[RMDB]
RNA sequence: GGGAACGACUCGAGUAGAGUCGAAAAAUUCGUCGGUUCAGCGACGAUAAGCCGAGAAGUGCCAAUAAAACUGUUAAGUGGUUUGGUAACGCUCGGUAAGGUAGCCAAAAGGCUGAAACUCCGUGCACAAAGACCGCACGGACGCUUCACAUAUAGCCUCUGACAAUAGGUUCGCCUAUUGUCAGAGAAAAGAAACAACAACAACAAC
Reactivity to 2A3 in 0.01 (KOAc 150mM, MgCl2 10mM, bicine 150mM(pH8.5), 24C), signal-to-noise 4, nucleotides 027 to 156: a010u060u030c010g000u000c000g030g000u080u130c070a050g040c030g010a000c000g000a010u010a050a040g020c010c030g000a000g000a300a010g010u000g000c010c010a040a020u100a100a080a020a020c030u080g070u300u300a170a020g030u060g030g050u020u020u020g010g000u020a030a030c010g000c050u020c020g010g000u000a000a010g040g010u040a020g040c030c000a000a130a100a070g050g000c010u020g010a010a020a030c000u000c000c010g000u000g000c010a050c020a080a210a070g100a190c100c100g000c000a000c000g010g010a010c040g000c030u100u130c080a090c120a080u250a020u130a140g050c000
Reactivity to DMS in 0.01 (KOAc 150mM, MgCl2 10mM, bicine 150mM(pH8.5), 24C), signal-to-noise 1, nucleotides 027 to 156: a160u000u000c010g000u000c000g020g000u000u000c030a150g030c000g050a040c000g000a010u010a100a300g000c060c030g040a010g000a060a060g000u000g000c040c010a040a000u000a050a030a040a050c020u000g010u020u010a180a090g000u000g000g000u000u000u000g010g000u000a020a030c030g000c000u000c010g040g040u000a020a030g000g000u010a130g010c010c010a020a050a010a280g020g020c010u000g010a040a000a000c030u010c010c030g030u000g010c010a300c040a120a110a040g040a140c180c110g010c000a040c000g000g000a010c050g020c030u010u000c020a100c070a130u010a160u000a060g020c210